[RMDB]
RNA sequence: GGGAACGACUCGAGUAGAGUCGAAAAAACGGAAAACGCCGAUUUGAUUUUGAUGAUUGUCAGUCGCAAAGUAACCGCCAUCAAUAAGGUAGAUCUCAUAUACUGAUUGAUUCGUGAAGCUGUCGGUGCUGACGCUAAUGCAUCGCACAGCACAUUCAGUUGCACACAGAUUCGUCUGUGUGCAACUAAAAGAAACAACAACAACAAC
Reactivity to 2A3 in 0.01 (KOAc 150mM, MgCl2 10mM, bicine 150mM(pH8.5), 24C), signal-to-noise 1, nucleotides 027 to 156: a000a000c010g000g060a010a030a000a060c100g000c080c020g010a020u160u060u100g110a180u050u200u100u070g110a160u060g040a050u070u070g000u030c000a000g010u030c020g000c020a140a160a000g020u060a050a000c000c010g000c020c000a020u060c070a000a050u100a110a000g120g000u010a010g030a150u000c020u000c160a040u110a010u030a160c090u020g040a110u010u010g080a050u130u120c060g010u060g090a080a010g040c000u000g000u000c000g000g040u000g050c010u110g040a070c090g020c150u160a130a000u170g000c000a020u000c000g000c000a050c000a000g000c000a020c000a000u120u110c050